[RMDB]
RNA sequence: GGGAACGACUCGAGUAGAGUCGAAAACGGUAUUGGUCAAGGCUAUACCGACAGCGCACCUUCAAAAGGGCGCUUGAUCCCCGGCCAAGCGCCGAAAUAUGAAUAGACACCGCUGGGCUGGUAGGGCAAAACAUGGCGAUCUUCGGAUCGCCAUGAAGAUCUAAUAUUCGUUCGCGAAUAUUAGAUCAAAAGAAACAACAACAACAAC
Reactivity to DMS in 0.01 (KOAc 150mM, MgCl2 10mM, bicine 150mM(pH8.5), 24C), signal-to-noise 1, nucleotides 027 to 156: c040g050g020u000a040u010u000g060g000u020c060a100a150g000g020c030u010a070u020a020c020c020g000a080c030a120g040c060g010c000a090c000c000u000u020c140a070a100a230a090g010g010g070c000g050c030u010u010g010a060u000c020c000c030c000g020g030c100c000a070a080g010c050g000c060c060g010a020a090a120u030a220u020g010a120a190u010a120g010a200c060a050c090c050g040c000u000g020g060g030c030u000g000g000u000a010g010g020g000c100a060a070a120a160c000a030u010g000g010c000g030a000u000c000u010u000c300g070g020a000u010c000g040c000c000a010u000g020a030a150
Reactivity to 2A3 in 0.01 (KOAc 150mM, MgCl2 10mM, bicine 150mM(pH8.5), 24C), signal-to-noise 3, nucleotides 027 to 156: c000g000g030u030a030u070u200g020g050u080c070a110a120g140g020c000u000a000u010a010c000c000g010a030c030a020g010c030g000c050a280c070c000u020u100c080a070a080a080a050g000g000g000c000g010c040u000u030g000a020u020c000c000c000c000g030g000c020c000a070a000g030c030g000c050c040g080a040a040a020u220a060u090g080a060a070u080a080g080a020c070a020c070c020g000c020u040g010g040g020c020u030g030g030u070a060g000g040g020c010a020a060a020a040c010a010u000g000g010c010g000a000u000c000u020u030c080g050g000a000u020c020g020c030c000a000u010g000a000a000
Structure probing data (DMS and 2A3) for a 207-nucleotide construct. For DMS, 2,285 sequencing reads were counted. For DMS the reverse transcriptase was MarathonRT. The RNA was probed in 150 mM KOAc, 10 mM MgCl2 and 150 mM bicine (pH 8.5) at 24 C.